Chemical mapping of a 207-nucleotide RNA with 2A3 and DMS. The reactions ran in a buffer of 150 mM KOAc, 10 mM MgCl2 and 150 mM bicine (pH 8.5), at 24 C.
RNA sequence: GGGAACGACUCGAGUAGAGUCGAAAAGUCGCACCAAGUGGAGCAUGGCUAACUACAAUUCCAAGUGUUCCAGACGGUCAAUUUUUGUGGUCUAAGACAACGAUGUCAGAUAACAGCAUUAUCUAUGGUAUUAGUAAGCAAGGGGCAGACGGCAAAAAUUCUAAUUCCUAUUCGUAGGAAUUAGAAUAAAAGAAACAACAACAACAAC
Reactivity to 2A3 in 0.01 (KOAc 150mM, MgCl2 10mM, bicine 150mM(pH8.5), 24C), signal-to-noise 4, nucleotides 027 to 156: g060u050c020g020c040a010c020c020a120a000g070u050g050g010a020g010c020a040u050g040g000c040u060a100a020c050u160a130c110a130a190u140u050c030c020a110a090g040u010g010u060u030c010c010a000g030a040c000g000g010u060c040a050a040u010u030u050u070u080g070u040g010g010u020c040u070a080a080g030a030c020a100a020c160g080a060u130g050u080c040a020g020a100u070a080a070c050a050g040c040a030u030u060a030u120c060u060a070u110g010g000u060a050u160u030a100g000u030a030a040g000c030a020a040g000g000g010g010c000a000g000a000c000g000g000c010a040a050a020a020
Reactivity to DMS in 0.01 (KOAc 150mM, MgCl2 10mM, bicine 150mM(pH8.5), 24C), signal-to-noise 2, nucleotides 027 to 156: g020u010c020g010c060a150c030c020a080a300g040u000g040g000a070g010c030a070u010g050g020c090u010a070a160c050u000a140c050a110a080u000u000c020c050a120a200g030u000g010u000u000c010c040a180g040a190c000g000g020u000c000a050a040u010u000u020u010u000g000u010g030g010u000c020u000a090a110g000a040c030a090a040c050g000a110u000g010u020c030a070g000a070u000a040a040c060a090g000c010a300u010u000a030u010c060u000a150u010g020g030u000a030u000u000a000g000u000a060a070g000c000a020a000g000g020g050g050c020a080g000a160c300g010g000c070a010a010a050a040
The data come from the RNA Mapping Database (RMDB), library OK3TST.